Structure probing data (DMS and 2A3) for a 177-nucleotide construct. For DMS the reverse transcriptase was MarathonRT. Conditions: 150 mM KOAc, 10 mM MgCl2 and 150 mM bicine (pH 8.5), 24 C.
RNA sequence: GGGAACGACUCGAGUAGAGUCGAAAAACACCGGUGUACGCACCGGUGAAGUUGAUGAUGAACUCGCUUGUUGCUGAAGGGUGAUGAAGGGCAUACUGGCUGAUUACAGUCGUAUACGUACGACUGAAGCAUAAACUUUCUUCGGAAAGUUUAUGCUAAAAGAAACAACAACAACAAC
Reactivity to DMS in 0.01 (KOAc 150mM, MgCl2 10mM, bicine 150mM(pH8.5), 24C), signal-to-noise 6, nucleotides 027 to 126: a110c010a000c000c010g010g020u000g020u010a090c200g040c010a010c010c000g020g000u000g010a010a030g010u000u010g010a100u010g000a070u010g010a100a070c060u010c030g000c180u010u010g020u010u000g000c030u000g010a090a070g000g010g010u000g010a090u010g010a060a090g000g010g010c040a060u010a070c050u000g010g010c050u010g000a080u030u020a170c020a020g000u000c000g030u000a020u000a080c170g030u000a010c000g000a010c010u000g000a060
Reactivity to 2A3 in 0.01 (KOAc 150mM, MgCl2 10mM, bicine 150mM(pH8.5), 24C), signal-to-noise 8, nucleotides 027 to 126: a000c000a000c000c010g010g000u020g010u020a080c300g010c090a000c010c000g020g000u000g010a010a000g030u050u080g060a150u040g010a040u070g050a040a030c010u010c030g020c030u040u080g040u060u070g030c040u030g070a090a050g070g020g030u050g030a090u070g030a030a060g030g000g000c020a020u060a120c030u050g030g010c020u040g060a090u080u170a050c000a000g000u000c000g000u000a020u000a040c240g030u010a000c000g000a000c000u000g020a020